[RMDB]
The data come from the RNA Mapping Database (RMDB), library OK1LIB.
Structure probing data (DMS and 2A3) for a 177-nucleotide construct.
The RNA was probed in 150 mM KOAc, 10 mM MgCl2 and 150 mM bicine (pH 8.5) at 24 C.
For 2A3, 1,342 sequencing reads were counted.
RNA sequence: GGGAACGACUCGAGUAGAGUCGAAAAGGGUGCAUGCACUAGUGUUACAUAGAUGCGUGCUCGAGUGCCAGCGGCGUCCGAACCGCGUUCGCUGGAUGAAAAUUGUUCACACUAGUAAACAUACAGCACGGUAAUUACGCUUCGGCGUAAUUACCGUAAAAGAAACAACAACAACAAC
Reactivity to DMS in 0.01 (KOAc 150mM, MgCl2 10mM, bicine 150mM(pH8.5), 24C), signal-to-noise 1, nucleotides 027 to 126: g010g020g000u010g020c000a030u000g000c180a020c030u000a030g000u020g010u040u020a040c170a070u030a050g020a160u020g000c000g000u000g000c000u000c040g010a140g020u030g000c000c000a010g040c070g000g000c000g000u030c040c050g040a160a210c130c090g010c030g040u000u000c020g000c000u020g020g020a040u030g000a040a090a120a180u000u000g000u000u000c090a060c010a090c110u000a030g000u020a070a100a060c070a030u000a190c130a100g000c160
Reactivity to 2A3 in 0.01 (KOAc 150mM, MgCl2 10mM, bicine 150mM(pH8.5), 24C), signal-to-noise 3, nucleotides 027 to 126: g150g020g000u020g000c030a060u000g000c020a000c000u010a020g000u070g140u300u100a050c070a070u020a090g210a140u060g090c000g000u010g000c040u030c030g040a090g100u220g010c000c000a000g030c000g000g000c000g040u040c080c050g030a100a070c080c020g000c000g020u150u300c010g040c000u000g010g010a000u080g070a000a120a000a020u100u150g050u090u120c020a010c000a000c070u010a040g040u140a090a220a020c020a050u180a080c040a040g000c060